[RMDB]
Chemical mapping of a 177-nucleotide RNA with 2A3 and DMS.

RNA sequence: GGGAACGACUCGAGUAGAGUCGAAAACAUUCUAACCACGCUUUUGGCUUUGUCAAUCCUUUGAAUUUGUGACGGUCGCAAUCCUUGAUAAUCCCCUUGGCAUCAGGGCAGUCCAGGCCAGCCUGGAUCUAUUCGAGAAGUUCGCUUCUCGAAUAGAAAAAGAAACAACAACAACAAC
Reactivity to 2A3 in 0.01 (KOAc 150mM, MgCl2 10mM, bicine 150mM(pH8.5), 24C), signal-to-noise 3, nucleotides 027 to 126: c020a070u140u010c030u090a040a090c020c010a040c050g060c040u140u050u090u100g030g020c000u080u060u090g050u060c030a060a090u050c050c000u130u090u180g110a130a100u120u110u110g120u080g040a040c030g010g010u040c010g000c060a020a070u030c010c010u070u030g020a050u090a160a080u080c010c000c000c020u000u040g040g040c010a040u040c030a040g040g000g000c010a010g020u000c010c000a010g000g040c020c010a030g030c050c000u000g010g010a010
Reactivity to DMS in 0.01 (KOAc 150mM, MgCl2 10mM, bicine 150mM(pH8.5), 24C), signal-to-noise 5, nucleotides 027 to 126: c100a120u010u000c040u010a130a150c060c030a050c110g010c070u010u000u010u000g020g010c040u000u000u020g020u000c070a060a110u000c040c050u000u000u010g020a050a110u010u000u010g030u010g020a090c110g000g010u000c050g010c060a090a070u000c020c020u000u000g010a050u000a110a110u000c020c010c010c050u000u000g020g010c080a070u010c040a060g000g000g020c160a100g000u000c030c030a030g010g010c060c080a130g000c040c010u000g000g000a080
Values are in units of 0.01, from 0 to 300, in steps of 10. DMS adducts were read by reverse transcription with MarathonRT. For 2A3, 4,445 sequencing reads were counted. Reactivities are given for positions 27 through 126. The DMS profile rests on 5,285 reads. The RNA was probed in 150 mM KOAc, 10 mM MgCl2 and 150 mM bicine (pH 8.5) at 24 C.